[RMDB]
RNA sequence: GGGAACGACUCGAGUAGAGUCGAAAAUCUCUCCAGUUGCCGCCAUCCAGGUACGAUUGCCAUUAUUUUCAGUGCCUGGCAUAGGGUGAAAAUAGUUAAGGAUUUCGGUAUUAACACUGCGAGAGCAAUUUACGCCCAUAUUCGUAUGGGCGUAAAUAAAAGAAACAACAACAACAAC
Reactivity to 2A3 in 0.01 (KOAc 150mM, MgCl2 10mM, bicine 150mM(pH8.5), 24C), signal-to-noise 2, nucleotides 027 to 126: u070c000u000c010u040c020c000a020g010u030u040g050c010c030g030c020c010a010u070c010c010a020g000g040u020a050c080g120a150u070u150g150c070c020a070u100u110a080u070u140u010u030c020a030g040u030g170c000c000u010g020g040c010a020u070a040g030g000g000u050g000a020a020a040a020u100a020g080u080u110a130a080g040g040a080u080u050u070c020g020g020u060a070u110u150a110a050c020a010c010u030g020c050g020a000g000a000g000c010a000
Reactivity to DMS in 0.01 (KOAc 150mM, MgCl2 10mM, bicine 150mM(pH8.5), 24C), signal-to-noise 4, nucleotides 027 to 126: u010c010u000c000u000c000c020a020g010u000u000g000c030c010g020c080c080a050u010c000c000a130g030g010u000a020c160g020a160u000u010g010c120c090a110u000u010a050u020u010u000u010c010a090g020u000g020c000c000u000g000g020c280a060u020a070g010g000g020u000g000a050a040a020a030u000a040g030u000u000a120a120g000g010a050u000u000u010c030g000g000u010a100u000u010a080a050c120a080c010u010g010c180g000a020g000a030g010c300a060
An RNA of 177 nucleotides, treated with 2A3 and DMS and read out base by base. 2A3 adducts were read by reverse transcription with SuperScript II with manganese. DMS adducts were read by reverse transcription with MarathonRT. For DMS, 3,960 sequencing reads were counted.